[RMDB]
RNA sequence: GGGAACGACUCGAGUAGAGUCGAAAAGAUAUGGAGCGAUGUGGGAGGGUUAUCCAUUAAAAUCGCCCAUCGGAAACGAUGGAAGCGAUUUUAAUGGAUAACCCAUCGAUCACGACGCUCCUAAGUCGUUGUUCUAAUACUUCGGUAUUAGAACAACAAAAGAAACAACAACAACAAC
Reactivity to DMS in 0.01 (KOAc 150mM, MgCl2 10mM, bicine 150mM(pH8.5), 24C), signal-to-noise 2, nucleotides 027 to 126: g000a100u020a300u000g000g020a010g020c010g010a110u000g030u000g000g000g020a040g040g010g000u000u000a020u000c010c000a000u000u000a000a000a020a000u000c010g040c020c000c010a000u000c010g010g000a140a130a230c000g020a010u000g000g000a190a110g050c000g000a000u000u000u000u000a000a010u000g000g000a000u000a000a000c000c000c010a020u000c140g020a080u020c010a010c010g020a100c020g020c000u000c000c010u000a000a140g010u010c150

Structure probing data (DMS) for a 177-nucleotide construct. Values cover nucleotides 27 to 126. Values are in units of 0.01, from 0 to 300, in steps of 10. Source: RMDB library TTRINS, as collected in RNAgym. The RNA was probed in 150 mM KOAc, 10 mM MgCl2 and 150 mM bicine (pH 8.5) at 24 C. For DMS the reverse transcriptase was MarathonRT.